[RMDB]
RNA sequence: GGGAACGACUCGAGUAGAGUCGAAAAGAGCGAUGGAUAUUAGUACUAGUGUAGUUACGAAUUUAUAUAUUAAACAAAGAUUAGAUGAUGCAGCUAUAUUAGUCAGUGAGGGCGGUAGUCUAUCAUCCUUAUACUUGGGGUUCGCCCCAAGUAUAAGAAAAGAAACAACAACAACAAC
Reactivity to 2A3 in 0.01 (KOAc 150mM, MgCl2 10mM, bicine 150mM(pH8.5), 24C), signal-to-noise 2, nucleotides 027 to 126: g030a000g070c140g010a030u020g010g030a020u030a060u190u140a060g030u060a020c000u000a020g030u020g020u040a030g010u010u030a020c000g010a000a000u070u180u000a150u020a020u000a060u170u300a180a110a080c030a010a290a020g040a090u130u140a040g040a060u010g000a030u150g010c010a010g000c000u000a000u010a010u090u050a020g020u000c030a020g060u010g100a050g000g010g000c040g020g000u020a010g040u000c020u040a040u080c010a030u050c010
Reactivity to DMS in 0.01 (KOAc 150mM, MgCl2 10mM, bicine 150mM(pH8.5), 24C), signal-to-noise 3, nucleotides 027 to 126: g010a090g000c060g010a060u010g010g010a120u010a070u010u010a090g020u010a030c030u000a030g030u000g020u010a030g000u010u000a030c000g000a240a030u010u000u010a040u000a080u000a150u050u010a130a090a180c070a070a110a160g000a080u000u000a050g020a030u000g000a210u000g010c050a040g010c030u010a030u000a020u000u010a010g000u010c040a120g010u020g000a080g000g010g000c070g020g000u000a040g010u000c030u000a040u000c020a100u000c100